The record gives the reactivity of an RNA of 207 nucleotides to 2A3 and DMS. For DMS the reverse transcriptase was MarathonRT. The 2A3 profile rests on 449 reads. It was measured as part of the RMDB library OK3TST. The DMS profile rests on 1,587 reads.

RNA sequence: GGGAACGACUCGAGUAGAGUCGAAAACGCUGGUGUUGCCCUCCACAAUUCAAUACAGAAUGCAAAUGCCAUUUUACAACUCAAAGAAUCAAUCAGAAAUUCCAACAAGGCAAUUGAGGAGCUUCAAGCAGGCUUACAGUCAACUGUGCUAGUUAUCACUUACAUGGGGGUUCGCCCCCAUGUAAGUAAAAGAAACAACAACAACAAC
Reactivity to 2A3 in 0.01 (KOAc 150mM, MgCl2 10mM, bicine 150mM(pH8.5), 24C), signal-to-noise 1, nucleotides 027 to 156: c070g030c060u090g000g060u030g000u040u030g020c020c000c000u040c010c020a010c020a090a050u160u190c010a020a020u070a120c040a050g120a060a050u080g020c090a100a060a060u050g000c010c030a070u050u020u140u120a040c060a090a010c070u130c110a100a040a080g000a090a000u040c070a040a000u010c050a070g100a140a020a040u130u000c000c010a010a000c000a050a090g000g030c000a000a010u000u050g010a050g000g000a040g020c000u000u070c020a030a030g020c000a010g090g000c000u030u060a010c060a010g000u000c010a030a020c050u070g060u030g070c000u070a060g100u100u140a090u290c030
Reactivity to DMS in 0.01 (KOAc 150mM, MgCl2 10mM, bicine 150mM(pH8.5), 24C), signal-to-noise 1, nucleotides 027 to 156: c050g000c010u010g020g000u000g000u000u010g010c080c070c020u000c060c010a100c070a030a070u000u000c060a130a150u000a150c090a080g010a060a100u000g000c040a050a050a100u010g000c080c070a080u010u010u000u000a130c060a070a090c080u000c010a050a060a170g010a070a040u010c020a100a210u010c020a140g010a120a040a110u000u020c000c070a040a070c120a080a040g010g020c010a050a070u010u010g010a130g010g010a080g000c030u000u020c050a050a130g040c070a030g020g020c010u000u000a000c050a090g000u000c040a040a100c030u010g070u000g030c010u000a080g010u000u010a090u010c120